[RMDB]
RNA sequence: GGGAACGACUCGAGUAGAGUCGAAAAGGAAUCGGUUCGCCGAUUCCAAAAAGCGUACUACGGUCUCAAUGAUGAGUGAACUACGUAGACUUCCCAAAUAGGAAGUUUACGCACUUUGAGAGACCGUAUCGCAAAAAUCGCACGUUCGCGUGCGAAACUUAAUAAGGGACUUCGGUCCCUUAUUAAGAAAAGAAACAACAACAACAAC
Reactivity to DMS in 0.01 (KOAc 150mM, MgCl2 10mM, bicine 150mM(pH8.5), 24C), signal-to-noise 2, nucleotides 027 to 156: g000g010a030a010u000c020g010g000u000u010c300g030c030c010g000a020u000u000c020c000a000a010a030a050a120g040c010g030u000a070c120u000a020c000g000g030u000c010u000c000a090a180u000g000a150u000g000a040g000u000g020a120a300c030u000a160c020g010u000a000g010a000c000u010u000c000c000c010a070a130a250u010a070g000g030a020a030g000u000u000u000a020c010g000c000a020c020u000u000u020g000a260g000a040g010a020c030c010g010u000a000u000c010g000c000a080a070a060a090a100u000c000g000c020a040c010g040u000u000c300g040c060g020u000g000c000g000a000a030a080